[RMDB]
RNA sequence: GGGAACGACUCGAGUAGAGUCGAAAACAAGGGCUAAACACCCUCGCCCCGAAGCAAGUAAGAUAGAGAAAAAGCGGUUCUCGGGAGCUUCAGUUGUUUCCACCGGGUAGUAGCCGAAGCGACAGCGGUACGUAAAUAGGUUCGCCUAUUUACGUACAAAAGAAACAACAACAACAAC
Reactivity to 2A3 in 0.01 (KOAc 150mM, MgCl2 10mM, bicine 150mM(pH8.5), 24C), signal-to-noise 1, nucleotides 027 to 126: c010a010a040g010g010g000c010u070a000a100a000c060a040c010c000c000u010c030g040c020c000c000c000g030a030a010g040c070a090a000g050u160a110a020g060a250u220a060g120a010g060a040a130a020a080a000g140c060g050g090u100u000c040u010c020g030g030g020a040g010c040u080u050c020a070g020u030u050g010u030u030u010c040c020a050c000c020g030g020g030u080a050g030u040a000g020c010c020g030a040a010g010c020g030a020c020a040g040c050g060
Reactivity to DMS in 0.01 (KOAc 150mM, MgCl2 10mM, bicine 150mM(pH8.5), 24C), signal-to-noise 4, nucleotides 027 to 126: c150a090a020g000g010g030c010u010a090a130a120c260a230c020c020c000u000c080g010c090c000c020c040g000a070a070g010c070a050a080g010u000a080a060g010a080u000a060g000a110g000a040a060a050a110a100g010c060g020g010u010u000c020u000c010g010g000g000a110g010c030u000u000c070a080g000u010u000g000u000u010u010c000c020a150c070c060g000g000g000u010a060g000u010a080g020c010c010g000a080a060g010c040g010a050c130a070g010c070g010
Source information:
An RNA of 177 nucleotides, treated with 2A3 and DMS and read out base by base. The RNA was probed in 150 mM KOAc, 10 mM MgCl2 and 150 mM bicine (pH 8.5) at 24 C. It was measured as part of the RMDB library VIROID. Values cover nucleotides 27 to 126.